[RMDB]
RNA sequence: GGGAACGACUCGAGUAGAGUCGAAAAAUCGUCCACGUCAUCCAUGCUACUGUCGUCUUGGUCGGCAUCGCCGGAUUCCAGGAUCUCCACAUCGUACUUGUAGUUCUGUGCCAAAACCAAAUUGGUGCCUAUAGUGCUGAUUCGUCAGCACUAUAGGAAAAGAAACAACAACAACAAC
Reactivity to DMS in 0.01 (KOAc 150mM, MgCl2 10mM, bicine 150mM(pH8.5), 24C), signal-to-noise 3, nucleotides 027 to 126: a090u020c070g020u020c000c030a090c060g000u020c040a050u020c050c070a100u020g020c030u000a070c050u000g000u000c060g000u010c040u010u000g020g000u060c050g000g040c050a120u020c120g040c020c010g000g000a060u010u010c020c020a070g010g000a020u010c020u000c030c040a070c140a040u040c070g000u000a070c090u030u010g010u000a060g010u000u010c000u020g000u010g000c020c030a010a050a040a090c050c110a020a100a150u020u010g010g020u000g050
Reactivity to 2A3 in 0.01 (KOAc 150mM, MgCl2 10mM, bicine 150mM(pH8.5), 24C), signal-to-noise 9, nucleotides 027 to 126: a010u100c050g040u020c020c010a040c030g040u030c010a080u020c040c000a020u070g020c020u020a080c020u050g040u080c030g010u000c020u040u050g040g010u040c010g020g010c020a110u090c080g020c020c010g090g020a150u100u030c010c000a020g020g030a050u010c020u010c030c010a060c010a090u080c040g050u040a070c030u050u090g050u060a040g020u060u040c030u060g070u040g010c010c010a020a030a070a100c040c040a040a100a200u090u120g020g010u030g020

Background:
An RNA of 177 nucleotides, treated with DMS and 2A3 and read out base by base. It was measured as part of the RMDB library OK1LIB. Conditions: 150 mM KOAc, 10 mM MgCl2 and 150 mM bicine (pH 8.5), 24 C.